[RMDB]
RNA sequence: GGGAACGACUCGAGUAGAGUCGAAAAGAUGUUCUCAGAUGAAGCUGCGGUCCUUCAUCGCACGAGAAGGGUACCUCGUGCUGAGAACAAGUACAGUGAGCAGAUUUGGAACUCAGCAGAUCUGAUAGAGGACCGCAGCUCUGUCGCUCACUGAUGGCGAUCGAAGAUAGUUCGCUAUCUUCGAUCGAAAAGAAACAACAACAACAAC
Reactivity to 2A3 in 0.01 (KOAc 150mM, MgCl2 10mM, bicine 150mM(pH8.5), 24C), signal-to-noise 3, nucleotides 027 to 156: g100a040u170g010u030u000c010u000c020a020g050a190u230g080a100a010g000c010u000g000c020g000g000u020c000c020u070u110c030a140u020c030g030c010a010c010g040a010g040a040a150g150g070g020u110a090c010c000u010c000g010u020g000c130u150g030a020g010a040a030c060a040a000g080u050a060c040a010g000u010g010a010g000c020a020g000a030u010u000u030g090g020a140a140c100u070c160a080g030c010a010g050a050u030c000u030g010a020u060a090g070a020g020g000a000c000c000g000c000a000g000c000u000c000u000g010u010c040g000c010u010c000a010c000u030g020a060u060g050g030
Reactivity to DMS in 0.01 (KOAc 150mM, MgCl2 10mM, bicine 150mM(pH8.5), 24C), signal-to-noise 2, nucleotides 027 to 156: g000a110u000g010u010u000c020u000c010a300g000a090u010g010a030a020g010c010u000g060c020g020g000u000c030c010u000u000c060a050u000c050g030c080a070c080g000a060g040a120a140g020g000g030u000a100c080c030u000c000g020u010g000c010u000g020a050g040a070a110c020a060a090g030u000a090c030a090g000u000g000a110g030c030a160g010a080u000u000u000g020g000a110a150c050u030c030a030g020c000a070g000a110u000c050u000g000a080u000a100g000a060g000g030a020c000c000g000c000a010g000c030u000c010u020g070u000c050g000c030u000c020a090c030u000g020a140u000g000g000
Source information
The record gives the reactivity of an RNA of 207 nucleotides to 2A3 and DMS. The reactions ran in a buffer of 150 mM KOAc, 10 mM MgCl2 and 150 mM bicine (pH 8.5), at 24 C. It was measured as part of the RMDB library OK3TST. For 2A3 the reverse transcriptase was SuperScript II with manganese.